[RMDB]
RNA sequence: GGGAACGACUCGAGUAGAGUCGAAAAGUGAAAGCUCCUUCUCUCGCAAAGUGUAACUCAUGAUUCUCAUGACCCCUGGUUGGAGAGAUCCGGACUAGGAGCCAGGGGGCCUCUGAUUCUGCCAGCCAAAACUGUCGUAAGUUCGCUUACGACAGAAGAUAUGUUGUCACUUCGGUGACAACAUAUCAAAAGAAACAACAACAACAAC
Reactivity to 2A3 in 0.01 (KOAc 150mM, MgCl2 10mM, bicine 150mM(pH8.5), 24C), signal-to-noise 3, nucleotides 027 to 156: g100u090g040a120a040a020g020c000u040c000c000u060u070c040u010c000u000c030g070c100a100a090a000g060u120g040u140a080a040c030u010c050a030u060g090a160u210u050c080u030c040a050u080g050a110c000c000c000c000u000g030g040u040u090g040g050a070g010a020g000a080u040c080c050g060g060a050c080u150a080g020g010a010g010c000c000a010g010g000g000g000g030c000c000u030c010u020g050a110u090u020c020u070g020c020c040a020g010c020c000a080a050a040a070c010u010g000u000c000g010u010a010a020g020u040u130c220g010c090u000u000a000c000g000a010c000a000g020a010a000
The data come from the RNA Mapping Database (RMDB), library M2RFPK.
Chemical mapping of a 207-nucleotide RNA with 2A3.
The RNA was probed in 150 mM KOAc, 10 mM MgCl2 and 150 mM bicine (pH 8.5) at 24 C.